This 177-nucleotide RNA was probed chemically with 2A3 and DMS. For 2A3 the reverse transcriptase was SuperScript II with manganese. Conditions: 150 mM KOAc, 10 mM MgCl2 and 150 mM bicine (pH 8.5), 24 C.
[RMDB]
RNA sequence: GGGAACGACUCGAGUAGAGUCGAAAAAGCAGCCCUAGAAUUAAUUUGUGUUAAAGCCUGAACUGAUCCUUUACCAAAAGAUUUAGUACCAAGUAUUAUUGCUCUUUUAUGAUCUUGCAAAGCUCCACUUUGUAUCUUUUUUCGAAAAGAUACAAAGAAAAGAAACAACAACAACAAC
Reactivity to 2A3 in 0.01 (KOAc 150mM, MgCl2 10mM, bicine 150mM(pH8.5), 24C), signal-to-noise 9, nucleotides 027 to 126: a000g050c030a010g010c000c000c000u030a060g060a070a030u050u080a050a110u100u170u160g110u020g030u050u110a090a040a000g020c010c020u030g050a070a040c030u030g020a080u050c020c010u060u090u080a080c030c020a040a070a040a020g070a070u060u080u130a040g020u010a040c020c030a110a030g040u030a080u120u020a050u030u110g020c010u010c010u070u060u040u010a090u160g070a060u020c000u040u040g020c030a070a050a050g020c010u020c020c000a030
Reactivity to DMS in 0.01 (KOAc 150mM, MgCl2 10mM, bicine 150mM(pH8.5), 24C), signal-to-noise 5, nucleotides 027 to 126: a080g000c080a100g020c020c020c040u000a100g010a090a090u020u020a050a080u020u020u000g010u010g010u020u010a070a070a150g010c040c020u010g010a070a070c090u010g000a080u000c030c020u000u010u010a080c140c110a040a040a050a060g000a070u000u000u000a050g010u000a080c080c070a050a070g000u000a040u000u010a030u010u010g000c070u000c020u000u010u000u000a060u030g000a050u000c040u000u000g010c050a040a070a120g010c050u010c060c050a190
2A3 is a SHAPE reagent: it acylates the 2'-hydroxyl of flexible nucleotides of all four kinds. For DMS the reverse transcriptase was MarathonRT.